[RMDB]
RNA sequence: GGGAACGACUCGAGUAGAGUCGAAAACAACAAGACCAUAUGAAUCAGAACACACACAUGAACCAACAGCCACAAAUACAACAAGGUCAUAUGCAAUCAUCAAACCAUCAAAUGAUGAGUCCAAAAGCUACUCUCUAUUGUUCGCAAUAGAGAGUAGAAAAGAAACAACAACAACAAC
Reactivity to DMS in 0.01 (KOAc 150mM, MgCl2 10mM, bicine 150mM(pH8.5), 24C), signal-to-noise 5, nucleotides 027 to 126: c090a130a130c150a080a080g000a100c100c030a040u020a060u040g010a080a070u000c090a060g000a110a090c110a060c060a040c090a030c060a060u020g000a100a110c050c040a040a090c130a080g000c050c040a020c090a060a060a070u040a060c100a060a080c070a080a060g000g010u000c030a030u030a010u000g000c070a090a060u010c010a030u020c050a020a040a050c060c080a080u010c110a050a070a050u020g000a030u010g010a090g010u000c070c050a060a030a050a060g000
Reactivity to 2A3 in 0.01 (KOAc 150mM, MgCl2 10mM, bicine 150mM(pH8.5), 24C), signal-to-noise 9, nucleotides 027 to 126: c060a000a030c030a070a040g070a060c020c030a030u060a030u170g110a090a040u100c040a040g160a240a020c040a000c010a000c000a010c020a180u110g070a060a050c020c010a060a070c020a040g020c020c000a050c030a070a120a020u220a060c040a120a000c020a160a040g040g030u040c010a010u040a030u120g080c040a020a080u040c000a000u030c020a060a070a110c050c020a070u130c050a070a130a080u120g020a010u020g010a020g040u030c030c030a050a130a010a000g030

Chemical mapping of a 177-nucleotide RNA with DMS and 2A3. The 2A3 profile rests on 18,450 reads. The reactions ran in a buffer of 150 mM KOAc, 10 mM MgCl2 and 150 mM bicine (pH 8.5), at 24 C.